[RMDB]
RNA sequence: GGGAACGACUCGAGUAGAGUCGAAAAGAGGCAUUAACAAGAGACUAGUAGGUUAGCUGCGUUGUGUUAGCCUUGCUGGCUGGCGCGACAUCGCGGCGAAUUUUAAAUAAGUCAGCUAUAGGUGUAGAGCUGCAUGUAGCAGGGGUGAUGGACAGGAGUUUAGGUUUUACUUCGGUAAAACCUAAACAAAAGAAACAACAACAACAAC
Reactivity to 2A3 in 0.01 (KOAc 150mM, MgCl2 10mM, bicine 150mM(pH8.5), 24C), signal-to-noise 4, nucleotides 027 to 156: g080a020g000g000c030a030u050u050a120a020c050a090a010g050a000g040a070c050u050a030g070u030a010g060g090u090u090a020g010c000u010g010c010g010u020u020g010u020g020u060u090a010g000c010c010u040u250g090c100u030g010g010c000u000g010g000c010g000c000g030a020c000a030u070c030g000c010g020g000c010g020a020a010u100u160u070u190a090a090a060u050a000a020g030u040c010a000g010c010u050a020u040a100g030g000u050g060u030a070g020a020g020c020u040g010c050a050u080g050u120a040g000c030a020g030g030g010g000u010g010a030u020g000g020a010c030a060g050g060a100
Reactivity to DMS in 0.01 (KOAc 150mM, MgCl2 10mM, bicine 150mM(pH8.5), 24C), signal-to-noise 1, nucleotides 027 to 156: g010a080g020g010c020a090u010u000a050a140c080a060a090g020a130g000a100c000u000a080g000u010a050g010g050u000u000a030g020c020u010g010c040g030u040u010g020u000g010u000u000a090g030c010c010u000u000g010c150u010g010g000c010u010g000g000c000g000c060g000a060c020a080u010c040g030c020g010g040c010g000a020a010u000u000u000u000a020a050a120u000a030a070g020u000c000a030g010c030u000a110u000a050g030g030u010g020u010a070g020a070g020c020u000g000c050a060u000g030u000a070g040c020a100g030g020g010g010u000g000a100u000g000g000a100c030a100g010g000a160